An RNA of 177 nucleotides, treated with DMS and 2A3 and read out base by base. It was measured as part of the RMDB library OK2TST. The reactions ran in a buffer of 150 mM KOAc, 10 mM MgCl2 and 150 mM bicine (pH 8.5), at 24 C. Values are in units of 0.01, from 0 to 300, in steps of 10. Reactivities are given for positions 27 through 126.

RNA sequence: GGGAACGACUCGAGUAGAGUCGAAAAAUAUGGUAUUUUAGGUUCAAUAAAGUACAUACAACGAUCAAUAAAACGGGUAAUACUACAUUUACUGAUGUAAUCAUUUUGAACAAUAAGAGGCAUAUCACGAAUGUUGACGUUUCGACGUCAACAUUCGAAAAGAAACAACAACAACAAC
Reactivity to DMS in 0.01 (KOAc 150mM, MgCl2 10mM, bicine 150mM(pH8.5), 24C), signal-to-noise 5, nucleotides 027 to 126: a080u010a010u000g010g000u010a060u000u010u000u000a020g000g000u000u000c040a030a040u000a050a070a080g010u010a050c050a080u000a110c110a070a120c100g020a090u000c110a070a070u010a040a020a050a070c220g000g000g000u000a040a070u000a120c060u000a060c130a080u000u000u010a040c060u010g000a050u000g000u000a060a070u020c140a110u010u000u000u000g000a020a010c010a050a090u000a020a030g000a030g010g000c020a020u000a020u000c120a150
Reactivity to 2A3 in 0.01 (KOAc 150mM, MgCl2 10mM, bicine 150mM(pH8.5), 24C), signal-to-noise 5, nucleotides 027 to 126: a000u090a040u030g020g010u050a120u020u010u010u030a040g020g010u030u020c020a020a000u060a100a080a010g030u000a010c010a030u080a050c030a100a060c070g060a090u120c060a130a090u110a180a110a030a010c050g030g000g020u020a040a030u030a110c060u030a040c040a050u040u070u040a080c050u060g040a040u060g020u030a030a030u080c070a050u010u030u040u080g010a010a000c010a040a090u050a040a010g040a010g070g000c020a020u030a020u100c070a050